The data come from the RNA Mapping Database (RMDB), library M2RFPK. The record gives the reactivity of an RNA of 207 nucleotides to 2A3.
RNA sequence: GGGAACGACUCGAGUAGAGUCGAAAAGGAAUUGGAAGGUCAUCCUUCACAGGAUUGUGUGGAAGUCCUGCUCGGGGCGGAAGCAUUAAAACCAUUCGAGCUAGUCAAUGCGUGGCGUGUCUCUCCGGUGUUUCUCUGGACUUCGGUCCAGAGAAAAGUAGGAACUAACCUUCGGGUUAGUUCCUACAAAAGAAACAACAACAACAAC
Reactivity to 2A3 in 0.01 (KOAc 150mM, MgCl2 10mM, bicine 150mM(pH8.5), 24C), signal-to-noise 1, nucleotides 027 to 156: g060g020a050a060u150u100g030g000a040a020g010g040u130c070a060u100c020c010u080u090c120a070c090a070g020g000a050u080u030g000u020g010u020g070g060a020a020g020u020c030c000u020g050c090u080c100g010g000g000g000c020g000g050a020a000g040c030a000u090u270a060a020a020a030c010c010a030u050u060c070g030a010g080c040u050a000g110u060c080a040a080u090g020c010g050u010g030g000c060g070u020g040u030c070u020c040u030c090c030g040g000u050g050u010u030u000c000u010c000u000g000g000a000c000u020u010c160g070g010u000c020c000a000g000a000g000a000a000a000a020